[RMDB]
RNA sequence: GGGAACGACUCGAGUAGAGUCGAAAAGGCGUAUGGAAUCACCGAUGUGUAUGACCCACGCCAAAACAUCCUCGGUGGAACGCGCCUAUUGCGGGAAAACCUGGACCGGGCCAAAGGCGACAUGCGAUAAACCUUACACUUUCGAGUGUAAGGUUUAAAAAGAAACAACAACAACAAC
Reactivity to 2A3 in 0.01 (KOAc 150mM, MgCl2 10mM, bicine 150mM(pH8.5), 24C), signal-to-noise 3, nucleotides 027 to 126: g020g000c040g000u070a120u200g100g100a200a060u080c000a000c000c030g040a060u220g080u030g030u120a040u100g080a130c010c010c030a030c060g030c030c010a030a040a000a040c030a050u050c000c030u020c020g000g000u010g000g040a080a050c030g000c000g010c020c010u070a180u070u120g070c020g000g030g030a010a090a070a040c010c000u010g050g000a040c000c000g040g010g050c040c050a030a080a010g030g020c020g000a080c040a070u140g030c010g040a020
Reactivity to DMS in 0.01 (KOAc 150mM, MgCl2 10mM, bicine 150mM(pH8.5), 24C), signal-to-noise 6, nucleotides 027 to 126: g010g010c010g010u000a140u000g010g010a220a080u000c000a020c000c050g000a040u010g020u010g020u010a050u000g000a150c080c030c100a090c110g000c050c060a030a060a100a080c070a040u000c030c050u000c020g000g000u000g010g010a080a070c060g000c020g010c030c030u000a090u010u000g000c050g000g010g000a090a050a080a090c040c030u000g010g010a090c030c050g000g000g000c040c040a040a090a090g010g000c030g010a090c070a040u010g010c060g010a180

Annotation: Structure probing data (2A3 and DMS) for a 177-nucleotide construct. The DMS profile rests on 8,777 reads. The reactions ran in a buffer of 150 mM KOAc, 10 mM MgCl2 and 150 mM bicine (pH 8.5), at 24 C.